This 177-nucleotide RNA was probed chemically with DMS. The RNA was probed in 150 mM KOAc, 10 mM MgCl2 and 150 mM bicine (pH 8.5) at 24 C.
RNA sequence: GGGAACGACUCGAGUAGAGUCGAAAAAGUUCGUCGAUAGCCAUGUAACCGAUGUUAUGGCGUGUUUUUGUGUAUUCCGGUCCUGGGUUUCCAAGGCCGACGAUCAGAUAUGGCGAAGUCACAAAGGUGAGUAAGGGUACUUCGGUACCCUUACUCAAAAAGAAACAACAACAACAAC
Reactivity to DMS in 0.01 (KOAc 150mM, MgCl2 10mM, bicine 150mM(pH8.5), 24C), signal-to-noise 2, nucleotides 027 to 126: a060g000u010u000c000g010u000c020g000a140u010a170g010c000c010a010u010g010u010a070a080c080c210g010a140u000g010u000u000a010u010g010g020c000g030u010g000u000u010u010u010u000g040u000g010u010a100u010u000c040c010g020g000u010c020c030u000g000g010g020u010u010u020c000c000a010a040g000g010c010c000g000a010c190g010a040u000c040a060g010a090u000a080u010g000g020c030g020a050a030g000u010c070a060c100a070a110a180g000g010